[RMDB]
RNA sequence: GGGAACGACUCGAGUAGAGUCGAAAAAACUGGGGAACUUUAAAAUAAACGCAGACGAUAAUUUCGCGAUAGCAGCCUAGUUGCUGCUCGUCCCUCUUAGUCCUCCUGCCGACUAAGACUGGACGUCAUUAUGCAGGGAACUACUUUAGGGGUGUCUGAUCACAGGUAUGUUCGCAUACCUGUGAUCAAAAGAAACAACAACAACAAC
Reactivity to 2A3 in 0.01 (KOAc 150mM, MgCl2 10mM, bicine 150mM(pH8.5), 24C), signal-to-noise 1, nucleotides 027 to 156: a030a000c140u090g010g000g000g060a030a020c100u300u200u170a280a210a240a130u150a090a150a000c050g000c020a080g030a020c050g070a010u050a180a140u170u270u190c030g030c000g130a040u080a020g000c020a000g000c000c000u140a080g000u110u120g020c000u000g030c000u000c000g000u000c020c010c000u020c000u000u000a000g000u000c000c010u080c000c040u000g060c030c060g000a000c000u000a030a030g010a030c020u060g000g000a010c000g000u020c000a020u080u220a070u200g030c030a000g020g000g020a000a060c040u130a010c020u120u070u020a060g040g000g000g010u020g030u010c070u040
Notes
Conditions: 150 mM KOAc, 10 mM MgCl2 and 150 mM bicine (pH 8.5), 24 C. This 207-nucleotide RNA was probed chemically with 2A3. Values cover nucleotides 27 to 156.